[RMDB]
RNA sequence: GGGAACGACUCGAGUAGAGUCGAAAACAAAUGUGAUUGAUACAUCUUCAUCCACACUGACAGGCACCCACAGAACAUCCACUGAGACCUAGACAGUAGUACUGACUGCAGGCCCUAACCCUGGGAUACAACACGAACAUGGUCUUGUCCUAAACAGACUUUUCCUGUAUUUCGAUACAGGAAAAGUAAAAGAAACAACAACAACAAC
Reactivity to DMS in 0.01 (KOAc 150mM, MgCl2 10mM, bicine 150mM(pH8.5), 24C), signal-to-noise 2, nucleotides 027 to 156: c050a060a130a040u010g020u000g010a200u010u020g010a130u010a060c090a050u000c070u000u010c040a080u000c030c040a040c000a040c070u000g000a100c070a050g010g020c060a130c020c000c050a130c040a080g040a050a040c050a120u030c030c010a150c070u000g000a110g000a090c010c010u020a140g000a200c030a030g000u000a070g000u000a140c040u000g010a090c020u030g000c040a120g010g000c020c020c040u000a080a090c030c000c020u000g030g000g020a070u000a050c010a000a110c020a050c000g010a040a060c110a070u000g000g010u000c030u000u010g030u000c000c040u010a070a060a080c090a140g020
Reactivity to 2A3 in 0.01 (KOAc 150mM, MgCl2 10mM, bicine 150mM(pH8.5), 24C), signal-to-noise 5, nucleotides 027 to 156: c070a010a090a050u150g020u040g040a130u090u100g020a020u050a130c050a090u040c070u090u070c000a050u030c040c020a050c000a000c060u060g080a040c040a050g020g050c020a040c000c060c000a020c010a010g060a060a040c020a090u050c030c020a050c080u040g030a040g050a160c010c000u050a040g030a070c030a020g050u060a020g040u080a090c020u050g060a010c010u040g010c010a020g010g050c010c000c000u060a080a070c020c000c020u010g020g000g000a030u060a090c060a100a000c010a030c100g060a130a010c050a100u100g020g000u000c000u020u030g040u030c010c010u060a110a020a020c040a020g050

Chemical mapping of a 207-nucleotide RNA with DMS and 2A3.
DMS adducts were read by reverse transcription with MarathonRT.
2A3 adducts were read by reverse transcription with SuperScript II with manganese.